[RMDB]
Structure probing data (DMS and 2A3) for a 177-nucleotide construct.
2A3 adducts were read by reverse transcription with SuperScript II with manganese.
DMS adducts were read by reverse transcription with MarathonRT.
As a SHAPE reagent, 2A3 marks flexible, mostly unpaired nucleotides at the ribose 2'-OH.
It was measured as part of the RMDB library OK1LIB.
For DMS, 18,652 sequencing reads were counted.
For 2A3, 9,085 sequencing reads were counted.
RNA sequence: GGGAACGACUCGAGUAGAGUCGAAAAGAUUCGCGUCAAACGCAUUUAUUAAGUACGAUUCAGCAUAAAGUACAAACAUUUGUCACUACGACAUCUGUAGAUGGUAUUGAUCAUGAAAUCAUGAAUAAAAUCGGAAUAAGUUCGCUUAUUCCGAUUUAAAAGAAACAACAACAACAAC
Reactivity to DMS in 0.01 (KOAc 150mM, MgCl2 10mM, bicine 150mM(pH8.5), 24C), signal-to-noise 8, nucleotides 027 to 126: g000a070u010u010c040g000c090g000u000c050a030a050a070c100g010c020a040u000u000u020a090u020u050a110a110g020u010a010c010g000a160u030u030c150a100g030c140a110u030a080a070a130g010u010a020c010a070a100a050c030a000u000u010u000g000u000c000a170c300u030a130c220g000a010c010a000u010c010u000g020u000a040g010a050u000g020g020u020a040u000u000g000a040u000c060a070u010g000a050a050a050u010c020a090u020g000a070a060u030a070
Reactivity to 2A3 in 0.01 (KOAc 150mM, MgCl2 10mM, bicine 150mM(pH8.5), 24C), signal-to-noise 9, nucleotides 027 to 126: g070a060u080u080c060g010c050g040u030c030a050a020a070c090g030c090a000u030u080u080a230u100u210a170a050g010u020a010c020g030a060u040u210c070a070g040c070a160u140a170a170a020g010u010a010c000a020a080a010c000a020u010u030u020g000u000c000a020c300u300a040c220g010a000c010a010u000c010u020g030u040a040g020a080u020g020g030u100a110u150u060g060a030u080c040a050u110g060a090a040a030u070c030a070u110g130a080a010u230a170